[RMDB]
RNA sequence: GGGAACGACUCGAGUAGAGUCGAAAAGGGGUCGUCUUUGUCAGUAAAGGUGGCUCCUUGGAUUUAUAGGCUGAAGCCUCCACGGCCUAUUGUCAGGAGCCUCUUUACUUGGAUUUAAGACGACGGAGGCACCCAAACCCACGUUUCGACGUGGGAAUCUGACUGAAAUGUUCGCAUUUCAGUCAGAAAAAGAAACAACAACAACAAC
Reactivity to 2A3 in 0.01 (KOAc 150mM, MgCl2 10mM, bicine 150mM(pH8.5), 24C), signal-to-noise 1, nucleotides 027 to 156: g080g000g000g000u000c010g000u000c000u060u030u010g010u010c050a080g000u020a000a000a020g110g120u150g010g000c010u000c000c020u050u040g000g000a000u000u300u020a020u010a000g020g000c000u060g130a150a070g070c020c020u010c050c020a040c030g010g030c000c000u000a030u000u000g020u020c020a040g000g010a000g020c010c040u000c010u000u000u010a000c000u020u060g090g010a000u120u170u280a010a000g000a000c010g000a000c000g000g010a000g010g010c020a040c000c000c020a060a110a190c000c030c000a000c000g010u030u090u150c300g070a030c000g010u020g000g000g000a010a020